RNA sequence: GGGAACGACUCGAGUAGAGUCGAAAAAGCCUGGUGGAUACGUCGACCAGGCAAUGCCGCCACAACGGCUUCCUGGCGUGGCGGAUCUCAUCCAAUGGAGCAACGCUCCGGAUACGUCCGGAGCGAAAAAAGCUCUGCUUCUUCGGAAGCAGAGCAACUUGUAUGCAAGGUUCGCCUUGCAUACAAGAAAAGAAACAACAACAACAAC
Reactivity to 2A3 in 0.01 (KOAc 150mM, MgCl2 10mM, bicine 150mM(pH8.5), 24C), signal-to-noise 1, nucleotides 027 to 156: a000g300c000c000u020g000g000u040g090g010a040u010a080c130g090u010c020g080a000c000c000a000g000g020c000a000a000u010g000c000c000g000c020c010a040c000a020a020c040g140g040c020u140u150c010c010u020g020g000c010g010u020g020g020c050g020g000a020u000c040u030c020a110u030c010c080a090a050u150g020g020a050g030c000a010a090c010g000c000u060c040c000g000g000a000u050a000c190g010u000c020c000g000g010a020g000c000g020a000a000a000a000a000a000g000c000u000c010u000g000c000u000u000c000u040u010c140g070g000a000a000g000c000a000g000a000g020c000a000a000